[RMDB]
RNA sequence: GGGAACGACUCGAGUAGAGUCGAAAAACUGAAUGGUUUGAUGUGGAUUCACCGACCUCGGGAUCGGUAAAAGGGGACAUGGAAACCUAUGAGAACAUCAGGGCCUCUGGUAAGACCUUGUGCCAGGUAUGAGCGAAAGGUUCGCCUUUCGCUCAUAAAAAGAAACAACAACAACAAC
Reactivity to DMS in 0.01 (KOAc 150mM, MgCl2 10mM, bicine 150mM(pH8.5), 24C), signal-to-noise 1, nucleotides 027 to 126: a110c040u010g020a100a150u030g020g000u010u000u010g000a100u010g000u070g030g010a160u010u010c070a090c030c000g000a070c030c010u010c190g040g010g000a110u000c010g020g040u010a000a000a100a130g000g010g000g010a060c100a070u040g010g000a110a080a080c030c010u000a100u000g000a250g010a100a080c060a020u000c020a040g020g010g000c050c030u000c030u020g000g020u000a090a070g010a070c090c070u020u010g010u010g000c030c010a060g000g020